[RMDB]
RNA sequence: GGGAACGACUCGAGUAGAGUCGAAAACAUUUUGCAUUAGAUUUACUAAUCGACUUUGCAUACUCUAUAACACCUGCACAAGUCUGUAGAGAAUCGCUAGAUGCUGUAGGUCUGGGUGAAGUCUCCAUCUCAACCGCAAUUUCGAUUGCGGUUGAGAAAAAGAAACAACAACAACAAC
Reactivity to 2A3 in 0.01 (KOAc 150mM, MgCl2 10mM, bicine 150mM(pH8.5), 24C), signal-to-noise 3, nucleotides 027 to 126: c030a020u120u090u050u110g050c030a040u000u130a040g020a030u050u050u110a160c110u140a060a060u020c000g070a060c080u090u020u050g000c000a020u080a180c000u030c020u100a050u030a250a070c010a050c070c060u040g030c060a050c020a040a130g020u010c050u060g050u020a050g030a030g000a120a050u110c070g030c080u030a000g020a020u150g040c070u070g020u040a020g000g080u040c000u040g030g040g000u050g030a040a030g020u010c000u000c060c000a060
Reactivity to DMS in 0.01 (KOAc 150mM, MgCl2 10mM, bicine 150mM(pH8.5), 24C), signal-to-noise 1, nucleotides 027 to 126: c110a030u000u000u040u000g000c020a000u000u010a140g000a070u000u020u000a100c070u040a080a060u000c040g000a240c130u030u010u030g030c000a080u000a040c020u000c150u000a080u020a050a010c080a090c100c050u040g000c100a100c200a020a070g030u000c190u000g000u000a000g000a300g000a130a000u000c150g000c130u000a140g000a060u000g000c210u000g000u000a000g000g000u000c030u020g000g010g000u020g040a140a060g000u000c110u010c000c060a130

Structure probing data (2A3 and DMS) for a 177-nucleotide construct.
Reactivities are given for positions 27 through 126.